[RMDB]
RNA sequence: GGGAACGACUCGAGUAGAGUCGAAAAACUGAGAUAUGCAGUAGAGAUGCUAUUAGUCUCCGAAUUGAUAUGACUUUCAACGUACGAAUAUCACGGCAUGAACAGCAUAAGCUUUAUUAGCGAACCAUGUAGUUACUCUAUUCGUAGAGUAACUACAAAAAGAAACAACAACAACAAC
Reactivity to 2A3 in 0.01 (KOAc 150mM, MgCl2 10mM, bicine 150mM(pH8.5), 24C), signal-to-noise 3, nucleotides 027 to 126: a000c020u030g030a010g010a030u100a020u080g000c000a000g000u080a020g010a000g000a010u010g000c010u020a030u140u110a040g010u000c010u000c010c000g050a050a090u050u040g000a000u010a010u040g030a010c000u020u040u030c040a050a020c060g040u050a010c030g050a020a010u010a000u030c020a000c010g000g000c000a020u040g010a030a010c000a000g000c010a010u020a050a020g000c000u050u060u020a090u040u060a020g000c000g020a010a010c010c010a020
Reactivity to DMS in 0.01 (KOAc 150mM, MgCl2 10mM, bicine 150mM(pH8.5), 24C), signal-to-noise 7, nucleotides 027 to 126: a080c020u000g010a080g010a100u010a040u000g010c020a060g020u000a050g010a050g000a050u000g010c100u000a080u000u010a120g010u000c020u000c010c040g010a110a100u000u010g000a030u000a020u000g010a230c160u010u000u000c130a110a110c160g000u000a040c060g000a120a040u000a020u000c020a060c120g010g000c230a030u000g000a090a080c040a020g000c030a040u000a070a100g000c030u000u000u000a060u010u010a030g010c020g010a060a090c050c040a080